[RMDB]
RNA sequence: GGGAACGACUCGAGUAGAGUCGAAAAGAUAUGGAGAAGGCAACAGCUUGGUCUCGGAAACGAGACCCAAGACAUGCCUCUCCUAAGUCAAAACCCAUGUAAUGACGUUCGCGUCAUUACAUGGGAACGCAUUCAAACGGUUCGCCGUUUGAAUGCGAAAAGAAACAACAACAACAAC
Reactivity to DMS in 0.01 (KOAc 150mM, MgCl2 10mM, bicine 150mM(pH8.5), 24C), signal-to-noise 2, nucleotides 027 to 126: g000a040u000a300u000g000g000a020g000a070a080g050g000c020a000a090c220a140g000c010u000u000g000g000u000c000u020c000g000g000a120a030a220c000g010a010g020a060c150c090c010a000a020g010a080c080a270u000g010c000c000u010c010u000c000c010u000a020a110g000u020c060a110a070a090a150c000c000c000a000u060g000u000a010a020u000g010a040c010g020u030u010c300g020c020g010u000c000a010u000u000a000c000a000u000g000g000g000a010a030
Reactivity to 2A3 in 0.01 (KOAc 150mM, MgCl2 10mM, bicine 150mM(pH8.5), 24C), signal-to-noise 1, nucleotides 027 to 126: g020a010u060a060u120g010g040a030g090a300a200g020g000c030a060a040c060a230g090c010u010u030g030g020u000c000u000c000g010g010a070a050a030c000g000a010g010a010c040c010c000a000a000g010a030c020a060u040g000c000c000u000c000u000c000c000u000a110a040g050u020c040a040a010a080a240c000c000c000a000u010g010u020a000a010u000g010a000c000g040u040u050c300g020c020g120u050c000a000u000u010a000c000a000u000g020g000g000a000a000

Chemical mapping of a 177-nucleotide RNA with DMS and 2A3. In probing experiments dimethyl sulfate is read out at A N1 and C N3, which are open when not base-paired. DMS adducts were read by reverse transcription with MarathonRT.